[RMDB]
Annotation
Structure probing data (2A3 and DMS) for a 177-nucleotide construct. For DMS, 3,525 sequencing reads were counted. Reactivities are given for positions 27 through 126. Reactivities are rounded to 0.1 and cut off at 0 and 3. DMS adducts were read by reverse transcription with MarathonRT. It was measured as part of the RMDB library M2PK90.

RNA sequence: GGGAACGACUCGAGUAGAGUCGAAAAUUAAAGGAGGAGGAGAAAUAUAGCGAGUGAUCGGUCCUCCCACGCGCGUCUCGCGCUGAUAAGAGGAAUAAGAGGAUGAUUAAUAGAUAGCGCGCAAAAACAAUUAUAGAGUCUUCGGACUCUAUAAUUGAAAAGAAACAACAACAACAAC
Reactivity to 2A3 in 0.01 (KOAc 150mM, MgCl2 10mM, bicine 150mM(pH8.5), 24C), signal-to-noise 2, nucleotides 027 to 126: u090u090a040a020a070g040g030a020g000g000a010g010g040a050g070a040a140a000u210a030u080a070g030c020g000a000g040u050g040a050u020c040g030g060u000c020c000u010c000c000c010a040c020g030c000g010c010g150u110c030u080c130g000c000g020c030u010g000a020u030a110a050g030a040g070g010a050a100u110a210a050g020a050g050g010a030u050g020a020u130u200a100a090u060a090g050a040u060a050g020c000g000c000g000c070a080a080a000a000a000
Reactivity to DMS in 0.01 (KOAc 150mM, MgCl2 10mM, bicine 150mM(pH8.5), 24C), signal-to-noise 4, nucleotides 027 to 126: u010u000a050a090a140g030g010a080g010g010a040g010g000a090g010a080a110a100u000a090u000a080g010c030g000a060g010u000g010a070u000c050g020g000u000c010c010u000c000c030c040a080c180g020c010g020c010g010u010c110u000c050g020c010g010c040u010g000a080u000a050a080g000a040g020g000a090a070u010a070a090g010a050g010g010a040u010g000a080u000u000a060a070u000a060g000a060u000a070g020c010g020c030g030c090a030a050a060a060a110